[RMDB]
RNA sequence: GGGAACGACUCGAGUAGAGUCGAAAACAACAUCUUCGGAUGUUGAAAAAAUCCUAAGUCCGUGAGGCGAAUGACAUGCUGGUAUCGGAAACGAUAUGCAGCAACAGCAUUCGCUACCCACCACGGAUAUGGAAAAAAACCCGCCUUCGGGCGGGAACCCAAUCUAAAUCUUCGGAUUUAGAUUGGGAAAAGAAACAACAACAACAAC
Reactivity to 2A3 in 0.01 (KOAc 150mM, MgCl2 10mM, bicine 150mM(pH8.5), 24C), signal-to-noise 2, nucleotides 027 to 156: c000a000a000c000a000u020c000u060u040c200g170g000a010u000g000u000u000g040a010a000a000a000a000a030u030c020c000u050a090a040g020u000c000c000g020u000g000a010g020g010c010g000a000a000u020g030a070c020a030u030g020c000u000g000g010u000a000u000c000g080g020a130a030a000c010g000a000u060a030u160g300c000a010g040c000a020a020c060a010g060c000a000u000u010c000g000c020u000a010c010c010c000a070c000c000a000c000g000g000a000u000a010u010g000g050a020a000a020a000a180a010a080c240c130c300g000c020c020u070u050c210g130g000g000c000g000g000g010a000a020